Conditions: 150 mM KOAc, 10 mM MgCl2 and 150 mM bicine (pH 8.5), 24 C.
Structure probing data (2A3) for a 207-nucleotide construct.
RNA sequence: GGGAACGACUCGAGUAGAGUCGAAAAUAAGAAAAAUAAACAAGUGGUGGUAGUCCGCCACUCUAAGGGGACGCAUUUAGAAGAAGAGGCUAGGUGGUAUUCCGGUGUGGGAUACUUGGUAAUAUGUAAGGGGAUGGUACGUUCGCGUACCAUCCAACAUCUCUCCUUGCUUCGGCAAGGAGAGAUGAAAAGAAACAACAACAACAAC
Reactivity to 2A3 in 0.01 (KOAc 150mM, MgCl2 10mM, bicine 150mM(pH8.5), 24C), signal-to-noise 2, nucleotides 027 to 156: u080a010a010g130a020a100a040a000a030u230a060a150a090c150a160a030g020u010g000g000u000g030g100u130a080g070u030c010c030g000c020c000a010c000u000c000u020a010a030g010g000g000g030a010c030g010c040a010u040u100u110a060g010a080a010g000a030a010g010a030g010g000c010u010a010g080g030u030g020g060u070a110u070u030c000c050g180g010u090g020u090g080g020g000a010u010a080c000u020u050g000g000u030a050a040u080a190u190g070u110a080a050g100g000g020g000a010u010g000g010u010a000c000g030u010u060c220g010c000g120u000a000c000c000a000u000c000c000a000a000